An RNA of 177 nucleotides, treated with DMS and read out base by base. For DMS, 1,248 sequencing reads were counted.

[RMDB]
RNA sequence: GGGAACGACUCGAGUAGAGUCGAAAACAAGGCUAAAUACUAGUUGGCGACCGAUAGUGAACAAGUACCGCGAGGGAAAGGUGAAAAGAACCGCUGUGAGCGGAGUGAAAUAGAACCUGAAACCGUAUCCCCCCCAGUUAUUCGUAACUGGGGGGGAAAAAGAAACAACAACAACAAC
Reactivity to DMS in 0.01 (KOAc 150mM, MgCl2 10mM, bicine 150mM(pH8.5), 24C), signal-to-noise 1, nucleotides 027 to 126: c100a050a030g010g020c060u060a010a160a070u030a050c070u010a140g000u020u000g000g000c030g000a030c000c060g090a020u000a160g000u010g000a050a030c090a020a050g000u020a050c040c000g000c120g020a030g000g000g050a150a040a000g020g050u000g000a110a080a110a160g000a170a150c000c000g000c010u000g000u060g020a100g000c000g030g020a020g020u000g000a000a020a060u040a110g000a090a000c000c000u000g000a020a200a280c000c000g000u020a180